[RMDB]
Chemical mapping of a 207-nucleotide RNA with 2A3 and DMS. The RNA was probed in 150 mM KOAc, 10 mM MgCl2 and 150 mM bicine (pH 8.5) at 24 C. For 2A3, 1,348 sequencing reads were counted. For DMS the reverse transcriptase was MarathonRT.

RNA sequence: GGGAACGACUCGAGUAGAGUCGAAAACAGAACUGGAUGGGCCGUGUGCUUAACCAGGACAAGAUCUCCUUCUCUCCAACGUUGUUGCCAACUCAUGAUUCACCUAACCUGUGCUUGGAGAGACGUGCUACCAUAUAGGUGUUCGCACCUAUAUGAAUACCGAAUACUAGUUCGCUAGUAUUCGGUAAAAAGAAACAACAACAACAAC
Reactivity to 2A3 in 0.01 (KOAc 150mM, MgCl2 10mM, bicine 150mM(pH8.5), 24C), signal-to-noise 2, nucleotides 027 to 156: c040a030g070a050a040c000u020g000g040a090u050g070g060g000c100c160g300u250g090u280g100c030u060u060a120a100c000c000a000g030g040a020c040a010a070g010a150u040c020u000c030c000u060u020c000u000c000u000c030c040a060a080c080g000u000u060g030u040u040g000c040c040a100a050c090u050c080a060u110g070a170u210u130c060a090c050c020u080a120a070c020c060u080g020u090g040c030u010u030g020g000a000g000a000g030a000c020g050u080g050c040u100a110c050c000a000u000a000u000a010g000g010u000g000u040u040c090g000c090a000c000c000u000a000u000a000u000g000a000a000
Reactivity to DMS in 0.01 (KOAc 150mM, MgCl2 10mM, bicine 150mM(pH8.5), 24C), signal-to-noise 3, nucleotides 027 to 156: c070a160g020a070a190c010u000g010g000a120u000g000g000g010c010c030g010u000g040u000g030c000u000u000a060a150c020c030a060g000g010a180c050a110a100g010a100u000c020u000c030c020u000u000c010u000c000u000c000c010a070a110c090g000u000u000g030u000u000g000c030c040a050a090c060u000c040a080u010g020a100u000u000c050a080c080c060u010a060a060c040c030u010g030u000g010c060u000u010g010g010a030g010a030g000a010c130g010u000g010c100u000a190c080c010a020u000a010u010a000g000g040u010g030u000u000c290g040c010a010c010c000u010a040u000a000u000g010a130a170